[RMDB]
RNA sequence: GGGAACGACUCGAGUAGAGUCGAAAAACGUGCCAUAUACGUAUGGCACGAAACAGAGCGGGGCCGUCAAACCGUUACCAUUACUGAGUUUAGUAAUGGUAAGGGUUCCACGGCCUCUGCUCAAAAAUAAUAGCAUCGGCUUCGGCCGAUGCUAUUAAAAAGAAACAACAACAACAAC
Reactivity to 2A3 in 0.01 (KOAc 150mM, MgCl2 10mM, bicine 150mM(pH8.5), 24C), signal-to-noise 1, nucleotides 027 to 126: a000c000g060u000g000c020c010a010u000a000u000a010c260g010u010a010u000g010g000c000a030c020g000a000a000a000c100a000g000a000g000c040g000g000g000g050c000c000g010u010c020a010a000a010c000c000g280u000u000a000c000c000a000u000u000a000c000u030g130a000g300u030u160u300a000g000u050a000a000u000g000g000u060a000a000g000g000g000u010u000c070c000a000c000g000g000c000c000u000c000u010g000c000u010c000a000a000a000a000a000
Reactivity to DMS in 0.01 (KOAc 150mM, MgCl2 10mM, bicine 150mM(pH8.5), 24C), signal-to-noise 1, nucleotides 027 to 126: a070c010g000u000g030c000c000a000u000a000u010a060c300g030u000a000u000g000g010c050a000c000g040a030a000a110c300a090g000a000g150c060g000g030g000g070c000c000g050u000c100a140a000a000c000c000g000u000u000a000c000c000a000u000u010a000c000u010g000a300g030u030u110u100a090g100u000a000a000u000g000g000u000a000a040g000g070g010u000u000c030c300a000c000g000g030c000c060u000c000u030g000c000u000c000a000a150a040a010a070

An RNA of 177 nucleotides, treated with 2A3 and DMS and read out base by base.
For 2A3, 709 sequencing reads were counted.
2A3 adducts were read by reverse transcription with SuperScript II with manganese.
Reactivities are given for positions 27 through 126.